[RMDB]
RNA sequence: GGGAACGACUCGAGUAGAGUCGAAAAGUCAACUUGUUAACGAUCGUUGGGAAUCUAUAAGUGCCGAGAAUACUCGCACUGACUUCGCUCUUGCUGCCUGAUCAGUGAUCGAAGGGUCAGCCCGGAUUCUGGUUUCGUUGCGAUGACUUGCCGCCCAGUGUCCAAUAUAGUUCGCUAUAUUGGACACAAAAGAAACAACAACAACAAC
Reactivity to DMS in 0.01 (KOAc 150mM, MgCl2 10mM, bicine 150mM(pH8.5), 24C), signal-to-noise 3, nucleotides 027 to 156: g000u000c030a040a060c090u000u000g020u000u000a050a090c070g010a060u000c090g020u010u000g010g020g010a070a030u010c030u000a120u000a050a070g020u000g010c040c050g010a120g010a100a110u000a050c030u000c020g010c040a040c010u000g000a040c020u000u000c030g000c040u000c060u000u000g020c050u000g000c060c030u000g000a060u000c020a040g020u000g010a050u010c030g020a090a080g020g000g010u000c040a060g020c020c030c100g030g010a050u000u000c030u000g020g010u000u000u000c060g040u000u000g000c020g010a150u010g000a090c030u000u000g020c080c060g000c020c000c010a290
Reactivity to 2A3 in 0.01 (KOAc 150mM, MgCl2 10mM, bicine 150mM(pH8.5), 24C), signal-to-noise 9, nucleotides 027 to 156: g000u010c010a040a080c150u110u110g030u140u270a000a000c000g000a010u040c050g090u120u180g130g010g000a000a020u010c010u010a030u040a180a030g010u030g160c260c130g030a020g030a160a200u290a300c020u010c000g000c000a000c000u000g010a010c000u000u000c010g000c010u010c010u020u030g000c010u010g000c000c110u150g040a250u220c000a000g000u010g020a050u300c000g000a010a010g020g000g000u070c050a050g100c030c020c000g010g000a010u020u000c010u060g100g030u040u080u030c000g000u000u000g010c000g020a030u030g000a000c000u010u020g090c070c050g020c010c000c010a010